[RMDB]
RNA sequence: GGGAACGACUCGAGUAGAGUCGAAAAAAGUAUGGAUUUUCUGAGCUUCAUCAUUAUUGAACGUGCCAUGCGACCUUAAUUUCCACAAGUUCAUUUGAUAUGCUUCACUUUGUUGAGUGAGAAGGCAGCUUAUUGACGAAUUCGUUCGUCAAUAAGCAAAAGAAACAACAACAACAAC
Reactivity to 2A3 in 0.01 (KOAc 150mM, MgCl2 10mM, bicine 150mM(pH8.5), 24C), signal-to-noise 1, nucleotides 027 to 126: a000a000g050u040a030u050g000g040a020u000u030u120u150c090u110g060a020g030c000u140u100c030a060u000c000a070u050u200a070u160u000g030a030a020c030g050u060g070c010c010a010u010g020c010g000a050c000c000u070u070a140a100u060u030u020c000c000a040c050a120a000g050u020u040c010a000u120u030u070g080a070u030a040u160g040c000u030u010c010a030c030u080u080u150g230u110u220g060a010g030u000g010a050g020a060a020g090g030c000a000
Reactivity to DMS in 0.01 (KOAc 150mM, MgCl2 10mM, bicine 150mM(pH8.5), 24C), signal-to-noise 3, nucleotides 027 to 126: a070a060g020u000a050u000g000g000a240u010u000u000u000c100u020g010a140g010c040u000u000c110a040u000c090a040u000u000a060u010u000g020a030a020c050g020u020g010c030c010a020u000g020c010g010a080c150c110u000u000a040a100u000u000u000c010c010a080c160a090a090g010u010u000c010a040u010u010u000g020a040u010a070u010g030c080u000u000c010a000c010u000u000u000g020u010u020g010a050g020u000g010a060g000a090a090g010g030c070a070